[RMDB]
RNA sequence: GGGAACGACUCGAGUAGAGUCGAAAAGGAUUUUCAUCCUCGAGCUUCUUAAUUUUCUUCUUGGCCUUCCGGAGCUCCCUCUCGAGUUCCUCCGCCCUUUUUCUUCCAGACACCCACUGCUCGAGGAAUAUCGUACGGUUCGCCGUACGAAAAAGAAACAACAACAACAAC
Reactivity to 2A3 in 0.01 (KOAc 150mM, MgCl2 10mM, bicine 150mM(pH8.5), 24C), signal-to-noise 8, nucleotides 027 to 129: g040g000a060u080u070u090u150c050a060u040c000c000u000c000g000a010g000c060u140u070c050u190u300a200a200u190u090u070u050c050u080u000c020u050u070g030g000c010c020u040u020c070c030g020g000a020g010c020u040c030c000c000u100c020u020c030g040a040g010u040u030c000c000u020c010c000g040c010c000c000u020u060u010u050u040c030u040u010c020c010a020g020a080c040a110c030c010c000a040c060u070g000c000u000c000g000a010g000g000a010a020u010a020
Reactivity to DMS in 0.01 (KOAc 150mM, MgCl2 10mM, bicine 150mM(pH8.5), 24C), signal-to-noise 5, nucleotides 027 to 129: g000g000a050u030u040u000u080c080a100u040c010c020u000c000g020a000g030c030u060u080c130u040u090a160a080u060u030u020u020c040u070u030c050u010u040g020g030c050c000u040u000c030c070g030g020a000g050c090u020c020c020c000u000c040u020c040g020a010g000u000u030c020c000u020c040c020g040c030c020c020u050u020u000u050u050c050u030u040c040c010a120g020a090c170a170c020c020c020a090c070u030g030c030u060c020g020a030g020g040a000a000u040a040

Notes
Structure probing data (2A3 and DMS) for a 170-nucleotide construct. The DMS profile rests on 15,654 reads.